This 177-nucleotide RNA was probed chemically with DMS and 2A3. DMS adducts were read by reverse transcription with MarathonRT. Conditions: 150 mM KOAc, 10 mM MgCl2 and 150 mM bicine (pH 8.5), 24 C. Reactivities are given for positions 27 through 126. It was measured as part of the RMDB library OK2TRN. The 2A3 profile rests on 2,403 reads.
RNA sequence: GGGAACGACUCGAGUAGAGUCGAAAAGGGAGUGUUUCAUCCUAAGCAGUCAACAUUUUCUAUGUGUGUCAUUGCCGCUCCAAGAGGGGUUGUGCAAAGAAUCUAUCUGUUCAGUGUGUAUGAUGCAACAUCCGCACAGUUUCGACUGUGCGGAUGUAAAAGAAACAACAACAACAAC
Reactivity to DMS in 0.01 (KOAc 150mM, MgCl2 10mM, bicine 150mM(pH8.5), 24C), signal-to-noise 2, nucleotides 027 to 126: g000g010g010a090g010u020g000u000u000u000c020a120u000c030c010u000a050a120g030c040a030g000u000c040a040a040c090a030u000u000u000u020c070u000a060u000g010u000g020u000g000u000c030a080u030u000g000c000c010g130c010u000c020c040a130a150g000a130g020g010g000g010u000u010g020u000g010c070a010a020a060g010a060a050u000c070u010a050u020c030u010g020u000u010c080a010g030u000g000u000g000u000a000u000g040a300u000g030c080a120
Reactivity to 2A3 in 0.01 (KOAc 150mM, MgCl2 10mM, bicine 150mM(pH8.5), 24C), signal-to-noise 3, nucleotides 027 to 126: g070g030g010a040g020u090g040u030u050u040c030a050u010c020c000u050a080a020g040c010a030g190u170c020a010a030c010a050u050u080u080u080c060u100a120u090g080u000g030u000g030u070c020a010u000u080g020c000c000g000c020u020c010c040a080a060g270a150g090g060g020g000u240u180g050u140g010c010a040a000a060g020a020a020u000c020u040a090u030c050u060g150u130u070c040a040g030u000g000u020g030u100a120u100g030a020u020g030c010a010